The record gives the reactivity of an RNA of 177 nucleotides to DMS and 2A3. 2A3 adducts were read by reverse transcription with SuperScript II with manganese.

[RMDB]
RNA sequence: GGGAACGACUCGAGUAGAGUCGAAAAGAUAUGGAAUGGUUGAGCCGAUAAGCUCCAUUCGGAAACGAAUGUGAGCUUUUGACGGCUACACCAUUCCUAAGUCAAAAGACCAUCUUCGGAUGGUCAACGCUAAAACAGAGUUCGCUCUGUUUUAGCGAAAAGAAACAACAACAACAAC
Reactivity to DMS in 0.01 (KOAc 150mM, MgCl2 10mM, bicine 150mM(pH8.5), 24C), signal-to-noise 4, nucleotides 027 to 126: g000a020u000a300u010g010g000a020a000u000g010g000u000u000g020a050g010c000c000g020a200u000a030a030g010c000u000c010c000a020u000u010c000g010g000a100a100a140c000g010a010a000u000g010u020g020a020g010c000u000u010u000u010g020a200c210g010g010c000u000a040c110a010c000c000a020u000u000c000c000u000a020a080g000u010c040a100a080a110a130g000a000c000c000a000u000c000u000u000c260g010g000a010u010g010g000u000c000a020a050
Reactivity to 2A3 in 0.01 (KOAc 150mM, MgCl2 10mM, bicine 150mM(pH8.5), 24C), signal-to-noise 2, nucleotides 027 to 126: g000a010u030a020u100g000g000a020a000u010g010g060u120u150g050a000g000c000c170g150a140u090a300a000g000c000u000c000c000a010u000u000c010g020g010a050a030a000c020g010a000a010u040g120u120g020a010g000c000u010u010u010u030g020a020c020g000g030c000u010a010c000a000c010c000a010u000u000c000c000u000a020a000g020u010c020a060a000a120a130g010a000c000c000a020u000c010u030u090c300g200g000a000u010g030g000u000c000a020a000